[RMDB]
RNA sequence: GGGAACGACUCGAGUAGAGUCGAAAAGCAGUCAAUUCGUUGACUGCAAAAAACCGUAGGGAGAUCGUGAACACCAUCGAUCUACUAUUCGAAAGAGUAGUAGGGAGGUGUUCACGAGUCUCCCUAAACGGAAAAAAAGUGGUCUUCGGACCACUAACCUAGAUAACAGGUUCGCCUGUUAUCUAGGAAAAGAAACAACAACAACAAC
Reactivity to DMS in 0.01 (KOAc 150mM, MgCl2 10mM, bicine 150mM(pH8.5), 24C), signal-to-noise 1, nucleotides 027 to 156: g020c000a020g000u010c010a010a060u000u010c300g070u000u000g000a000c010u000g030c000a000a020a060a040a010a040c010c000g020u010a030g010g010g000a020g000a140u000c000g000u000g010a020a010c060a030c000c000a300u000c200g010a060u020c000u000a040c000u000a000u000u000c000g020a180a170a290g000a030g020u000a010g010u000a030g010g000g000a040g050g020u010g000u000u000c000a000c030g000a000g000u000c000u010c000c000c000u000a000a000a010c010g040g010a000a000a050a110a050a040a040g020u000g020g020u000c000u010u020c260g030g010a030c000c040a000c000u000a000a050
Chemical mapping of a 207-nucleotide RNA with DMS. The RNA was probed in 150 mM KOAc, 10 mM MgCl2 and 150 mM bicine (pH 8.5) at 24 C. The DMS profile rests on 3,385 reads. DMS adducts were read by reverse transcription with MarathonRT. The data come from the RNA Mapping Database (RMDB), library RNAMAK.